[RMDB]
RNA sequence: GGGAACGACUCGAGUAGAGUCGAAAAGAACAAAAGAAUUUAGGAUUGACUCAGGUUCAAUUGAUGGGGCUCAUGCGCCAGGGGUUCCACAUGUACACUUUGGUGUAAAAAAUCCUGAAACAGGUAAGAGUAUUACCAGGUUCGCCUGGUAAUACUCAAAAGAAACAACAACAACAAC
Reactivity to DMS in 0.01 (KOAc 150mM, MgCl2 10mM, bicine 150mM(pH8.5), 24C), signal-to-noise 2, nucleotides 027 to 126: g000a120a080c100a030a080a160a170g000a130a060u010u000u010a010g000g000a060u000u000g020a080c040u000c080a050g010g000u000u010c050a080a100u000u000g000a110u010g020g020g000g040c030u020c010a030u000g040c060g010c060c020a080g000g010g000g000u000u000c000c010a010c080a060u000g000u000a060c120a010c010u000u010u020g000g010u000g030u020a000a010a080a090a050a010u000c000c000u000g010a040a030a120c150a030g000g000u010a090a130
Reactivity to 2A3 in 0.01 (KOAc 150mM, MgCl2 10mM, bicine 150mM(pH8.5), 24C), signal-to-noise 1, nucleotides 027 to 126: g000a000a010c030a020a050a020a030g060a130a090u170u110u120a100g000g010a050u060u040g010a020c020u030c110a030g030g050u020u050c010a080a050u080u090g110a100u020g070g000g000g000c000u000c010a020u140g030c000g000c020c000a010g000g010g060g000u020u010c040c000a030c010a020u060g070u060a020c070a020c070u030u110u300g100g020u100g020u060a030a080a000a030a000a000u000c010c000u010g070a090a040a000c050a070g100g050u110a180a010